RNA sequence: GGGAACGACUCGAGUAGAGUCGAAAAUCGAGCUUAGCUUAUCUGGGUGUUAUACCUAGUAUUAGGAUAGCACCAUCCGACGACUUUGCCGCCAAGUUGCUGUCAUUGGAGACUGGAGGCUCAGCUGCCCGGUUAUCAUUUUCGAAUGAUAACCGGGAAAAGAAACAACAACAACAAC
Reactivity to 2A3 in 0.01 (KOAc 150mM, MgCl2 10mM, bicine 150mM(pH8.5), 24C), signal-to-noise 1, nucleotides 027 to 126: u080c000g020a000g000c000u010u010a000g000c010u110u040a030u180c020u070g070g040g000u040g010u010u050a070u060a120c030c000u080a100g160u160a250u270u010a010g010g000a000u020a000g000c020a010c010c010a010u010c020c020g000a010c010g010a030c030u140u170u190g030c090c020g050c050c000a150a030g110u110u070g090c050u000g040u020c000a020u010u120g030g010a040g010a050c060u040g050g000a000g000g020c000u000c050a010g060c050u020g000
Reactivity to DMS in 0.01 (KOAc 150mM, MgCl2 10mM, bicine 150mM(pH8.5), 24C), signal-to-noise 1, nucleotides 027 to 126: u000c080g040a050g020c010u030u000a030g000c050u010u020a080u000c030u010g010g010g020u000g010u000u000a030u020a140c010c000u000a030g000u010a080u010u000a010g000g000a110u000a020g000c020a020c010c000a090u000c030c030g000a070c030g000a030c030u010u000u000g000c000c080g000c100c140a040a110g040u020u000g020c020u000g020u000c030a110u000u000g020g000a060g020a300c160u010g000g020a030g000g000c000u000c050a020g020c020u000g020